RNA sequence: GGGAACGACUCGAGUAGAGUCGAAAACUUGUAGUUGGCCGCGAGGAAAACGGCUAUACCGCCAGCGUCGUGCGACUUCGAAGACGCCCGGCCGCCAUAGAUGACUUUGUAACGGGCACGAGUUCGCCCAAUUGAUAAGGUUCGCCUUAUCAAUUGGAAAAGAAACAACAACAACAAC
Reactivity to 2A3 in 0.01 (KOAc 150mM, MgCl2 10mM, bicine 150mM(pH8.5), 24C), signal-to-noise 5, nucleotides 027 to 126: c010u040u080g060u120a140g030u030u120g050g000c020c020g010c060g060a170g010g160a030a080a020a040c030g010g000c000u060a080u090a080c020c030g020c030c020a020g000c010g050u050c010g050u070g080c030g050a080c030u130u100c100g060a080a030g040a040c050g000c000c000c010g010g020c030c010g000c010c000a060u070a060g110a140u150g020a070c070u080u120u120g060u060a110a050c040g020g010g010c030a010c050g040a040g040u080u060c020g060c020
Reactivity to DMS in 0.01 (KOAc 150mM, MgCl2 10mM, bicine 150mM(pH8.5), 24C), signal-to-noise 8, nucleotides 027 to 126: c050u000u010g020u010a090g020u000u000g010g010c020c010g030c070g010a150g020g010a080a080a120a100c070g010g010c030u010a080u010a090c060c070g000c030c060a100g010c030g020u000c030g010u010g010c040g010a090c120u000u000c100g010a130a150g000a060c060g010c010c060c030g010g010c040c070g010c050c040a060u010a080g010a110u010g000a090c070u000u000u010g020u000a100a110c090g010g000g010c020a130c050g000a060g000u000u000c050g010c060
This 177-nucleotide RNA was probed chemically with 2A3 and DMS. High 2A3 reactivity points to a flexible backbone, as in loops and unpaired stretches.